[RMDB]
RNA sequence: GGGAACGACUCGAGUAGAGUCGAAAAGCCUCGAACACUCCAUCGACGACAUAACUCGCAAGAUUGCGCUUCCACUCCAAGCUAACCUGGAUUUUCUCGUCGAUGGAGUCCAGACAGAUGAGGUCGAGCGAUUUAUAUUAUUCGUAAUAUAAAUCGCAAAAGAAACAACAACAACAAC
Reactivity to DMS in 0.01 (KOAc 150mM, MgCl2 10mM, bicine 150mM(pH8.5), 24C), signal-to-noise 9, nucleotides 027 to 126: g010c020c010u010c020g010a150a130c200a070c000u000c000c000a010u000c000g020a020c010g010a020c230a060u010a040a050c170u010c020g010c090a090a070g000a070u010u010g010c120g000c060u000u000c080c070a130c140u000c090c090a040a050g000c040u000a050a050c070c020u000g000g000a050u000u000u000u000c170u000c010g010u010c010g010a010u000g000g000a000g000u000c040c080a060g010a120c180a100g010a110u000g010a030g010g020u000c090g010a150
Reactivity to 2A3 in 0.01 (KOAc 150mM, MgCl2 10mM, bicine 150mM(pH8.5), 24C), signal-to-noise 7, nucleotides 027 to 126: g000c000c000u010c010g050a060a030c020a010c060u000c000c000a000u000c000g000a000c000g020a010c010a080u200a070a050c030u010c050g070c080a040a070g060a300u090u160g020c050g010c060u100u050c060c030a120c070u050c030c030a040a020g020c020u060a020a070c010c010u010g010g020a020u060u020u070u040c040u000c010g000u000c000g000a000u000g000g000a000g000u000c000c000a020g010a050c050a020g120a100u180g010a020g000g020u060c050g020a020

Structure probing data (DMS and 2A3) for a 177-nucleotide construct. 2A3 adducts were read by reverse transcription with SuperScript II with manganese. The reactions ran in a buffer of 150 mM KOAc, 10 mM MgCl2 and 150 mM bicine (pH 8.5), at 24 C. The data come from the RNA Mapping Database (RMDB), library OK2TRN.